[RMDB]
RNA sequence: GGGAACGACUCGAGUAGAGUCGAAAAUCUGCUAGUACUGUUAAUGAUGACAUUGUUAUGAUGCCAUGGCUUACUUGGGAAAAUCUUGAACUUGCUGAGCCUGGCUCUCUUGCUAAGGCUGCUAUUGAGGCAUGGAUAUAUUCGUAUAUCCAUGCCUAAAAGAAACAACAACAACAAC
Reactivity to 2A3 in 0.01 (KOAc 150mM, MgCl2 10mM, bicine 150mM(pH8.5), 24C), signal-to-noise 2, nucleotides 027 to 126: u020c000u050g040c020u040a030g030u090a130c020u040g040u110u100a080a080u130g120a080u120g020a050c000a010u000u140g090u100u130a090u180g040a010u110g000c020c000a050u170g000g000c010u000u010a000c010u010u040g000g000g000a020a050a050a120u130c080u040u070g010a030a040c010u040u010g050c090u010g070a010g000c000c010u010g000g000c000u030c010u020c000u010u040g000c020u030a100a000g010g000c010u000g000c010u120a120u190u150g050
Reactivity to DMS in 0.01 (KOAc 150mM, MgCl2 10mM, bicine 150mM(pH8.5), 24C), signal-to-noise 5, nucleotides 027 to 126: u010c050u000g020c060u000a060g020u000a030c080u010g020u000u000a110a080u010g010a090u020g000a060c040a080u000u000g010u000u000a070u020g010a050u010g010c010c010a050u010g020g000c020u000u000a030c020u000u000g000g010g010a100a050a110a110u010c180u000u010g000a230a190c040u000u010g020c160u000g000a020g020c000c010u000g000g010c010u000c140u000c070u000u010g020c040u010a070a110g020g000c020u010g000c030u000a120u000u000g010